[RMDB]
RNA sequence: GGGAACGACUCGAGUAGAGUCGAAAAUGGAAGCAAUUAAUAUCAUGUUUGGUAGUGUUGGUUUGAACUUUAAACAGCUUAUUGGCUAUGUGUUUGCACCAAUCGCAUUCUUAAUGGGGAUUCCAUGGCGUAUCAUCGGCUUCGGCCGAUGAUACGCAAAAGAAACAACAACAACAAC
Reactivity to 2A3 in 0.01 (KOAc 150mM, MgCl2 10mM, bicine 150mM(pH8.5), 24C), signal-to-noise 2, nucleotides 027 to 126: u000g000g000a010a130g030c030a000a000u170u090a050a030u140a010u250c030a030u090g090u120u050u050g190g070u230a220g010u050g000u160u100g120g000u150u090u090g080a000a000c000u080u000u240a270a240a090c050a060g100c090u120u300a060u300u300g090g000c000u000a000u140g290u000g010u040u000u000g030c000a010c000c000a000a020u000c080g000c000a000u000u040c000u040u060a030a040u020g000g000g030g200a090u170u000c000c000a020u000g070